The record gives the reactivity of an RNA of 177 nucleotides to DMS and 2A3. 2A3 adducts were read by reverse transcription with SuperScript II with manganese.
[RMDB]
RNA sequence: GGGAACGACUCGAGUAGAGUCGAAAAGAAGACGUGACGAAAAGUCACGAAAAGAGCUAUGAGGUACCCAUAGCAAAGAAAAGGUACCAAGACGGAAACGUCAGACAUCGGAGACGAUGUCAAAAGACUAAAAUAAUCAUUUCGAUGAUUAUUUUAGAAAAGAAACAACAACAACAAC
Reactivity to DMS in 0.01 (KOAc 150mM, MgCl2 10mM, bicine 150mM(pH8.5), 24C), signal-to-noise 6, nucleotides 027 to 126: g010a130a140g010a140c010g010u000g000a010c000g000a110a070a100a180g000u000c000a000c000g000a030a060a090a100g010a180g000c010u000a000u010g010a130g000g000u000a010c000c010c000a010u000a000g000c010a100a110a130g000a070a020a040a100g000g000u000a010c000c000a200a080g000a010c010g000g020a120a100a140c000g010u000c010a160g000a000c010a010u010c000g000g000a230g020a150c010g000a000u010g000u000c000a030a050a090a060g010a160
Reactivity to 2A3 in 0.01 (KOAc 150mM, MgCl2 10mM, bicine 150mM(pH8.5), 24C), signal-to-noise 9, nucleotides 027 to 126: g180a040a020g110a030c010g000u000g000a000c020g080a120a150a080a090g000u000c000a000c000g020a020a020a000a010g100a010g000c000u000a000u000g020a060g080g000u000a000c000c000c000a000u010a000g040c110a080a020a010g140a020a070a010a010g000g000u000a000c000c000a000a030g010a000c010g010g030a050a100a000c010g000u010c010a000g000a000c000a000u000c000g020g010a050g020a060c010g000a000u010g000u000c000a010a010a020a030g030a000
The reactions ran in a buffer of 150 mM KOAc, 10 mM MgCl2 and 150 mM bicine (pH 8.5), at 24 C. It was measured as part of the RMDB library OK1LIB.